[RMDB]
RNA sequence: GGGAACGACUCGAGUAGAGUCGAAAAGGGGUCGUUUAGGUGCCAUGAUGACCAUGAAGACAUGGUCUGAAGCCUCCACGGACCAACAGCUUCAUGCAAGUGGCCGCUAAACGACGGAGGCACCCAAAAGUCACGGUGUCUUCGGACACCGUGACAAGUCGUUACAAACGUUCGCGUUUGUAACGACAAAAGAAACAACAACAACAAC
Reactivity to 2A3 in 0.01 (KOAc 150mM, MgCl2 10mM, bicine 150mM(pH8.5), 24C), signal-to-noise 2, nucleotides 027 to 156: g000g000g020g020u020c010g020u010u010u000a050g020g040u110g030c000c000a050u070g090a250u020g000a020c010c010a010u000g000a000a000g040a060c130a300u300g000g000u070c000u010g020a100a030g010c010c010u000c010c000a030c030g000g000a010c020c010a100a160c090a090g070c000u000u000c010a000u030g010c040a190a240g010u000g010g000c000c000g020c130u010a000a000a000c000g000a010c020g010g000a000g040g000c000a030c040c010c050a080a160a010a020g010u000c010a000c000g020g000u000g000u000c010u020u070c210g030g010a000c000a000c000c000g020u000g000a000c000a010a000